This 207-nucleotide RNA was probed chemically with DMS and 2A3. It was measured as part of the RMDB library OK3TST. For DMS, 2,918 sequencing reads were counted. 2A3 adducts were read by reverse transcription with SuperScript II with manganese. As a SHAPE reagent, 2A3 marks flexible, mostly unpaired nucleotides at the ribose 2'-OH. Conditions: 150 mM KOAc, 10 mM MgCl2 and 150 mM bicine (pH 8.5), 24 C.
RNA sequence: GGGAACGACUCGAGUAGAGUCGAAAAUCAGAAAAACUUUACAUUGUAACUGGUAGAGAUAUAAAAGCAUACAAGGCCGGGUGCGGAGGCUUACGCCUGUAAUCCUGAGCCUGCAAUCCUGUAAUCGAAGCACUUUAGGAGGCCAAGGCACCUGAGGACAUAACCUAGGUUUCGACCUAGGUUAUGUAAAAGAAACAACAACAACAAC
Reactivity to DMS in 0.01 (KOAc 150mM, MgCl2 10mM, bicine 150mM(pH8.5), 24C), signal-to-noise 2, nucleotides 027 to 156: u020c000a100g000a070a060a070a050a100c060u000u000u000a090c000a070u000u010g000u010a110a110c080u040g050g010u000a050g000a100g020a150u000a100u000a050a050a050a070g000c040a070u000a070c040a040a020g030g030c040c060g030g020g000u000g020c300g020g000a140g040g000c070u000u000a060c140g010c020c000u000g020u000a050a190u000c010c020u000g000a150g000c010c000u010g030c010a040a110u000c070c000u020g010u010a090a120u000c100g000a140a110g020c070a030c050u010u000u000a080g060g000a100g040g030c020c040a050a110g020g030c060a060c000c040u000g020a130g000g010
Reactivity to 2A3 in 0.01 (KOAc 150mM, MgCl2 10mM, bicine 150mM(pH8.5), 24C), signal-to-noise 2, nucleotides 027 to 156: u060c000a010g120a040a080a010a030a010c020u130u140u090a070c020a120u190u160g070u120a150a110c030u060g010g010u040a020g040a030g030a030u040a000u000a200a070a060a030g010c020a020u060a130c060a080a000g020g030c010c020g010g020g000u010g000c000g000g050a000g000g020c010u060u050a020c080g020c010c010u250g150u210a000a000u010c010c000u010g010a020g010c000c000u000g020c000a030a090u030c000c020u060g030u100a070a090u070c130g020a050a010g010c020a040c030u080u080u030a030g030g040a010g060g000c050c040a000a040g040g000c030a020c000c000u020g030a070g000g060